[RMDB]
RNA sequence: GGGAACGACUCGAGUAGAGUCGAAAAUUUGGCGACCUCUAUUUGUUCAUUCUGUGCGAGCAGUUUGCCGAUGGCUUCGCGAAUAGAAGGAUGCCAGUUAACGGCGCGAUUGACCGCGUCAUUGAGCACCAUCCAGCAUGUUCGCAUGCUGGAUGGUAAAAGAAACAACAACAACAAC
Reactivity to 2A3 in 0.01 (KOAc 150mM, MgCl2 10mM, bicine 150mM(pH8.5), 24C), signal-to-noise 5, nucleotides 027 to 126: u140u020u060g000g000c000g040a050c020c000u000c010u010a030u020u010u020g040u100u110c080a020u070u060c040u040g100u100g130c030g030a060g030c030a080g070u080u190u140g030c030c020g120a100u200g020g040c070u040u070c040g000c000g010a020a020u030a010g100a200a010g020g000a010u040g000c000c000a000g010u030u050a120a030c090g000g000c010g020c000g060a070u080u260g110a120c080c000g020c000g000u000c010a030u020u220g090a060g020c060
Reactivity to DMS in 0.01 (KOAc 150mM, MgCl2 10mM, bicine 150mM(pH8.5), 24C), signal-to-noise 2, nucleotides 027 to 126: u010u010u010g010g000c000g010a030c010c000u000c030u000a000u000u000u000g000u000u010c110a070u010u000c020u020g040u010g000c160g000a120g010c060a080g030u010u010u030g030c090c050g000a110u020g020g010c120u000u000c120g020c010g000a020a000u000a010g000a090a040g010g020a100u000g030c000c010a030g020u030u010a140a100c150g000g010c030g000c000g000a150u060u050g000a130c180c020g000c020g010u000c000a020u030u000g010a130g000c140